[RMDB]
RNA sequence: GGGAACGACUCGAGUAGAGUCGAAAACUUUUUGAUGAAAAGGUGGACACUACAUCACCAAUACAAGUUUAAUGGCUACAUACGGCACUCAGUUUACACUUACAUUACAUAUGCAUUUUAACACAUCGUAGUUGUAAUUGUUCGCAAUUACAACUACAAAAGAAACAACAACAACAAC
Reactivity to DMS in 0.01 (KOAc 150mM, MgCl2 10mM, bicine 150mM(pH8.5), 24C), signal-to-noise 5, nucleotides 027 to 126: c000u000u000u000u000u000g010a070u010g000a060a050a100a110g020g020u000g010g010a140c120a080c070u000a080c140a140u000c010a070c030c020a050a050u000a090c210a050a050g030u000u000u010a110a080u000g010g010c040u000a070c090a080u000a080c110g000g000c030a050c060u010c050a050g000u000u000u000a080c080a050c050u000u000a060c050a030u000u010a080c100a030u000a040u000g010c050a050u000u000u000u000a030a060c100a060c200a060u010c150
Reactivity to 2A3 in 0.01 (KOAc 150mM, MgCl2 10mM, bicine 150mM(pH8.5), 24C), signal-to-noise 6, nucleotides 027 to 126: c000u100u070u030u120u170g170a130u090g030a050a060a010a020g030g010u030g020g030a020c030a020c120u110a010c020a080u060c020a020c020c010a020a020u140a060c060a060a050g020u030u060u090a130a060u090g040g010c010u010a010c030a080u080a050c020g030g000c020a010c030u050c010a040g010u060u060u050a040c060a010c020u060u040a020c010a080u070u060a040c020a050u130a040u130g030c040a060u000u010u060u160a140a050c080a010c010a050u110c110
Background: This 177-nucleotide RNA was probed chemically with DMS and 2A3. For DMS, 3,845 sequencing reads were counted. The RNA was probed in 150 mM KOAc, 10 mM MgCl2 and 150 mM bicine (pH 8.5) at 24 C. Source: RMDB library RFMREP, as collected in RNAgym. 2A3 adducts were read by reverse transcription with SuperScript II with manganese.